[RMDB]
RNA sequence: GGGAACGACUCGAGUAGAGUCGAAAAUUGAGAUUCUAAAUUUCUGACGCGAUUAUUGCCGUCUUCUUGGUACGUCACAGUAAUAUGAUCAAGUUUCGGUUUACCUUGCCAAUAGUCCUUAAAAUUCGUAGCAAGAUGGAUUCGUCCAUCUUGCUACAAAAGAAACAACAACAACAAC
Reactivity to DMS in 0.01 (KOAc 150mM, MgCl2 10mM, bicine 150mM(pH8.5), 24C), signal-to-noise 2, nucleotides 027 to 126: u060u060g030a060g000a060u000u000c050u000a100a060a170u000u000u000c000u000g000a080c020g020c020g010a020u030u020a080u000u000g000c060c030g000u000c020u030u030c080u000u000g000g000u030a050c040g000u030c110a060c040a010g000u010a020a120u030a130u000g010a070u040c030a030a240g000u000u010u000c010g020g020u010u010u000a100c030c090u010u010g010c040c040a030a050u040a100g000u000c000c020u000u020a050a040a050a150u040u000c190
Reactivity to 2A3 in 0.01 (KOAc 150mM, MgCl2 10mM, bicine 150mM(pH8.5), 24C), signal-to-noise 6, nucleotides 027 to 126: u120u180g080a080g050a060u090u010c040u160a100a130a120u130u130u020c050u080g050a050c050g000c010g050a040u090u100a030u060u300g060c030c030g020u030c000u070u020c030u020u070g040g000u050a050c040g030u040c070a030c040a130g100u130a060a120u140a170u300g080a050u070c000a020a060g010u000u040u050c020g010g010u000u010u050a020c000c000u020u050g010c000c000a050a100u010a110g040u020c000c000u110u170a000a080a090a000u230u130c080